[RMDB]
The record gives the reactivity of an RNA of 177 nucleotides to DMS and 2A3. The reactions ran in a buffer of 150 mM KOAc, 10 mM MgCl2 and 150 mM bicine (pH 8.5), at 24 C. Reactivities are given for positions 27 through 126. Source: RMDB library M2PK50, as collected in RNAgym. For DMS the reverse transcriptase was MarathonRT. The DMS profile rests on 9,457 reads.
RNA sequence: GGGAACGACUCGAGUAGAGUCGAAAAGAGGAGUCAUUCGUGACUCCUCAAAGGGAGCUCAACUCUCCCGCUCAAGUCGGAGAGCCUUCGGACCCAAAAGAAUGCUGUUCCUGUUCGCAGGAACAAAUGGUUUAGAAAUAUUCGUAUUUCUAAACCAAAAAGAAACAACAACAACAAC
Reactivity to DMS in 0.01 (KOAc 150mM, MgCl2 10mM, bicine 150mM(pH8.5), 24C), signal-to-noise 8, nucleotides 027 to 126: g010a020g010g000a020g020u000c000a030u000u020c190g020u000g010a010c000u000c000c000u000c000a010a040a080g000g010g010a060g010c280u000c150a110a270c080u000c010u000c010c000c060g020c060u000c140a060a090g020u000c300g010g010a060g000a040g010c050c050u000u000c020g010g000a280c010c000c010a060a060a100a100g000a100a070u010g010c150u000g000u000u000c000c000u000g010u000u010c160g010c010a010g000g000a010a000c000a010a050a080
Reactivity to 2A3 in 0.01 (KOAc 150mM, MgCl2 10mM, bicine 150mM(pH8.5), 24C), signal-to-noise 6, nucleotides 027 to 126: g000a000g000g000a000g010u010c010a020u070u110c140g100u100g000a000c000u000c010c000u000c000a000a000a000g010g000g000a010g010c040u030c160a010a060c040u010c000u000c050c020c020g010c010u150c100a150a130g070u080c030g020g020a030g010a020g050c000c010u030u020c010g070g020a080c010c000c000a040a080a010a030g100a090a050u160g050c040u050g050u000u000c000c000u010g010u030u040c250g010c070a000g010g010a000a000c000a000a060a020